[RMDB]
RNA sequence: GGGAACGACUCGAGUAGAGUCGAAAAGAAAGCUCCUCAGCCGUGUGGAGGAGAAUGGCUAUAACCACCGAAACCUGAGGAAACAGGAAGCCACAACGCAAGCCAUGUGGUUGGCACACGGAAGAAAAAUUACCUCCGUCUUCGGACGGAGGUAAUUAAAAGAAACAACAACAACAAC
Reactivity to DMS in 0.01 (KOAc 150mM, MgCl2 10mM, bicine 150mM(pH8.5), 24C), signal-to-noise 2, nucleotides 027 to 126: g030a090a110a060g030c020u000c000c000u000c010a090g000c050c000g000u000g050u000g000g000a000g000g020a010g000a010a000u020g030g010c010u000a060u000a240a090c040c010a160c070c020g000a040a090a170c010c000u000g000a180g070g000a070a140a140c010a000g000g000a100a100g100c000c060a030c070a030a100c240g050c130a070a040g000c090c130a070u050g000u010g010g010u000u010g040g000c040a010c040a000c000g000g030a230a110g040a040a050a060
Reactivity to 2A3 in 0.01 (KOAc 150mM, MgCl2 10mM, bicine 150mM(pH8.5), 24C), signal-to-noise 1, nucleotides 027 to 126: g070a010a050a010g020c010u060c000c020u000c000a060g080c040c030g000u060g000u000g000g000a030g040g000a010g000a040a070u020g000g000c000u050a000u020a230a080c000c010a020c000c010g120a130a030a080c000c000u040g060a180g110g160a130a040a030c000a000g000g000a000a000g000c010c010a000c030a140a110c060g110c010a060a150g010c050c030a000u030g010u000g130g000u020u000g200g030c050a000c000a000c050g100g000a040a060g010a000a170a020
Structure probing data (DMS and 2A3) for a 177-nucleotide construct.
The DMS profile rests on 1,731 reads.
The reactions ran in a buffer of 150 mM KOAc, 10 mM MgCl2 and 150 mM bicine (pH 8.5), at 24 C.